[RMDB]
RNA sequence: GGGAACGACUCGAGUAGAGUCGAAAAACGACACAAUUCGUUGUGUCGUAAUGGAAAAGGCUAGGACCGGCCAGACAAACGUCCGAAAAGAUCGAAAGAUCACACGCCACGAAUUCGUUCGUGGCAAGAGAAACUUGUGUUUCGACACAAGUUUCUCAAAAGAAACAACAACAACAAC
Reactivity to DMS in 0.01 (KOAc 150mM, MgCl2 10mM, bicine 150mM(pH8.5), 24C), signal-to-noise 1, nucleotides 027 to 126: a070c020g000a020c000a000c010a010a040u000u000c190g070u000u000g000u020g000u010c000g010u000a050a060u010g000g000a100a050a060a140g010g010c030u010a050g000g000a020c050c100g020g050c000c000a090g030a080c220a000a100a130c180g000u000c000c010g000a090a040a080a050g010a030u000c000g010a040a070a120g000a010u000c000a130c240a020c270g000c000c030a000c000g000a030a020u000u000c290g000u000u000c000g020u000g000g000c000a000a020
Reactivity to 2A3 in 0.01 (KOAc 150mM, MgCl2 10mM, bicine 150mM(pH8.5), 24C), signal-to-noise 1, nucleotides 027 to 126: a000c000g010a000c000a000c000a000a040u110u060c210g010u120u000g000u000g020u000c000g010u010a020a050u050g020g040a030a050a160a220g000g020c020u090a080g110g000a030c040c110g010g010c000c020a020g020a020c080a000a130a010c020g010u060c010c000g020a040a000a020a060g010a010u010c010g020a020a000a000g000a000u010c000a000c020a030c050g020c000c000a000c000g000a000a040u130u080c260g040u030u000c000g000u040g000g010c000a000a000